[RMDB]
RNA sequence: GGGAACGACUCGAGUAGAGUCGAAAAUCAAACGAUUUCGAUCGUUUGAAACGGACCACUCCUGCGGGAGUUAAGGCCAUACGGACAGCCGGGUCCACUGCGAGUCAUUCGGUUUCGACCGAAUGAAGAAGCUCAUCCAAUUCGUUGGAUGAGCUUCAAAAGAAACAACAACAACAAC
Reactivity to 2A3 in 0.01 (KOAc 150mM, MgCl2 10mM, bicine 150mM(pH8.5), 24C), signal-to-noise 3, nucleotides 027 to 126: u030c020a000a000a000c010g010a020u040u050u180c210g120a030u010c000g000u000u010u000g020a030a000a000c060g000g000a010c010c000a020c010u000c020c000u060g020c280g070g030g000a020g010u030u190a070a030g010g000c010c000a090u130a200c070g050g040a020c020a030g000c030c010g000g010g000u000c010c020a030c050u130g040c040g050a020g080u030c000a000u000u000c010g010g020u040u080u050c140g020a040c000c000g020a000a000u010g000a010a040
Reactivity to DMS in 0.01 (KOAc 150mM, MgCl2 10mM, bicine 150mM(pH8.5), 24C), signal-to-noise 3, nucleotides 027 to 126: u010c000a010a020a010c010g000a000u000u000u000c200g030a020u000c000g010u000u000u010g010a030a120a120c230g000g010a020c010c010a070c000u000c000c010u000g010c140g010g010g000a040g000u000u010a070a080g020g010c000c010a200u000a120c120g000g020a130c110a180g000c010c010g030g010g000u000c010c000a070c100u010g000c120g010a220g000u010c000a000u000u000c000g010g010u000u000u010c180g020a020c010c000g010a020a000u000g000a010a060